[RMDB]
This 177-nucleotide RNA was probed chemically with DMS and 2A3.
It was measured as part of the RMDB library OK2TST.
The 2A3 profile rests on 2,990 reads.
For DMS the reverse transcriptase was MarathonRT.
Reactivities are given for positions 27 through 126.
For DMS, 4,004 sequencing reads were counted.

RNA sequence: GGGAACGACUCGAGUAGAGUCGAAAAGCGCAGGUCUACCGUCGAGCCCGUGGGUGUCCGGGCUUAGGGAUGCGAGUUCAGGACCGUGGUGCUCUGGCCUACCCGCAGUGGGUGCCCACACCCGUGCAACACGCGGAUAAUUCGUUAUCCGCGUGUUAAAAGAAACAACAACAACAAC
Reactivity to DMS in 0.01 (KOAc 150mM, MgCl2 10mM, bicine 150mM(pH8.5), 24C), signal-to-noise 3, nucleotides 027 to 126: g000c050g040c020a200g010g010u000c030u000a120c080c040g010u000c100g000a020g010c000c010c010g020u010g030g020g020u010g010u000c110c010g010g010g020c010u000u000a070g030g020g000a110u000g010c100g010a110g010u000u000c100a110g020g010a030c010c030g010u010g020g030u010g010c030u000c070u010g010g000c030c020u000a070c030c000c010g000c080a090g000u000g000g000g010u000g000c050c030c050a070c060a070c030c010c020g010u000g010c100
Reactivity to 2A3 in 0.01 (KOAc 150mM, MgCl2 10mM, bicine 150mM(pH8.5), 24C), signal-to-noise 2, nucleotides 027 to 126: g060c030g020c020a000g000g050u000c040u050a070c040c030g110u100c050g040a010g020c000c000c040g040u070g020g070g000u090g050u040c040c030g010g000g000c020u010u030a040g020g010g030a020u120g010c050g040a060g030u070u100c060a040g040g030a040c050c060g200u050g070g020u060g030c000u030c110u030g050g030c010c020u040a030c050c000c020g000c020a020g050u150g060g000g000u070g020c000c010c020a010c000a010c000c010c010g040u110g000c020